[RMDB]
This 177-nucleotide RNA was probed chemically with 2A3. Reactivities are given for positions 27 through 126. The RNA was probed in 150 mM KOAc, 10 mM MgCl2 and 150 mM bicine (pH 8.5) at 24 C.

RNA sequence: GGGAACGACUCGAGUAGAGUCGAAAAGAUAUGGAGCCGGUAGGGAGAACCGGGUCGGAAACGACCCUGUAGUUCAUCGAUCUACGGCUCCUAAGUCAAAAGUGCAUGAGACUUCGGUCUCAUGCACGGCUCUCAUCAAGUUCGCUUGAUGAGAGCCAAAAGAAACAACAACAACAAC
Reactivity to 2A3 in 0.01 (KOAc 150mM, MgCl2 10mM, bicine 150mM(pH8.5), 24C), signal-to-noise 1, nucleotides 027 to 126: g000a010u010a000u030g000g000a010g040c000c130g240g300u290a010g010g030g000a030g010a000a030c020c060g040g020g040u000c000g000g060a020a010a010c020g000a010c000c000c000u000g080u170a280g000u020u000c050a170u300c050g000a010u000c000u000a010c020g000g000c020u030c000c000u000a000a010g000u020c000a000a040a000a110g010u000g010c000a010u010g000a010g000a020c050u150u260c300g110g000u010c000u000c000a000u010g000c000a010c010